[RMDB]
RNA sequence: GGGAACGACUCGAGUAGAGUCGAAAAGCACGUCGUUACGACGACGUGCAAGAAAACAAAAGGAGUGGCGAGGUCUGGCCACAGUGAAUCAAACAGACCAAAAGCAUGGUGGUACGCCACCAUGCAAGAUCCGGUAUCCCUUCGGGGAUACCGGAUCAAAAGAAACAACAACAACAAC
Reactivity to 2A3 in 0.01 (KOAc 150mM, MgCl2 10mM, bicine 150mM(pH8.5), 24C), signal-to-noise 2, nucleotides 027 to 126: g000c000a000c000g000u000c000g030u010u140a100c280g000a010c010g000a000c000g150u000g000c010a010a000g020a020a040a000a010c190a040a000a000a000g280g000a170g050u010g000g000c030g020a160g030g010u000c010u030g000g000c050c000a000c000a000g100u020g110a030a030u220c110a090a030a000c020a010g010a000c000c000a190a000a000a000g000c000a000u000g000g010u010g080g000u020a010c300g070c030c000a000c000c000a000u000g010c010a000a000